Description
This 177-nucleotide RNA was probed chemically with 2A3. The 2A3 profile rests on 1,108 reads. Reactivities are rounded to 0.1 and cut off at 0 and 3.
RNA sequence: GGGAACGACUCGAGUAGAGUCGAAAACCUUCACAAGGGCUGACUGUAGCUGGGGGAAGACGGUCUACUCAUCUGCUCUCUCCUUUCAGCCAGCGGGCUGUCUUCCCAGGUGUAGAUCACCUAUUCUACUUCUGCGUAGCUUCGGCUACGCAGAAGUAAAAGAAACAACAACAACAAC
Reactivity to 2A3 in 0.01 (KOAc 150mM, MgCl2 10mM, bicine 150mM(pH8.5), 24C), signal-to-noise 2, nucleotides 027 to 126: c000c000u120u170c150a160c030a130a110g000g000g020c040u020g010a070c000u000g020u140a020g070c010u040g070g040g040g010g090a030a000g000a000c020g010g000u010c040u040a040c030u070c050a160u050c040u010g070c000u010c000u020c000u000c090c000u050u160u100c050a030g000c000c000a010g010c070g040g000g010c020u010g010u000c020u000u000c000c000c020a020g000g000u000g010u040a050g000a140u050c000a000c020c010u020a110u040u010c060u090